An RNA of 207 nucleotides, treated with 2A3 and read out base by base.
RNA sequence: GGGAACGACUCGAGUAGAGUCGAAAAUGAAUGGACAUGCAAAGUUGAGAUGCCUGCUGAAUAUCCAAGUGGACAUGGAUGUAUGGAUACAGGGAUCUGGUGGUUGGGGAGAGGUGGAGAGUGGACAGGGAUUCCUUGAUCUUUUAUCUAGAAUGUAAGGUAUCGUGAUAUUCGUAUCACGAUACCUAAAAGAAACAACAACAACAAC
Reactivity to 2A3 in 0.01 (KOAc 150mM, MgCl2 10mM, bicine 150mM(pH8.5), 24C), signal-to-noise 1, nucleotides 027 to 156: u130g030a020a000u030g010g010a010c020a040u110g000c060a040a030a170g060u060u070g050a090g030a040u060g080c050c000u010g000c030u060g010a090a000u050a020u100c030c010a030a040g070u050g080g030a090c040a070u090g010g030a010u040g050u080a130u050g020g000a020u030a140c030a110g000g010g010a050u000c070u030g000g040u070g050g000u060u160g040g000g000g010a150g000a000g010g050u130g000g070a080g000a000g060u080g000g030a040c050a040g080g000g000a010u000u070c060c000u050u040g060a050u010c000u050u050u080u060a060u020c000u050a030g000a170a060u040g040u190a100
Values cover nucleotides 27 to 156. For 2A3 the reverse transcriptase was SuperScript II with manganese.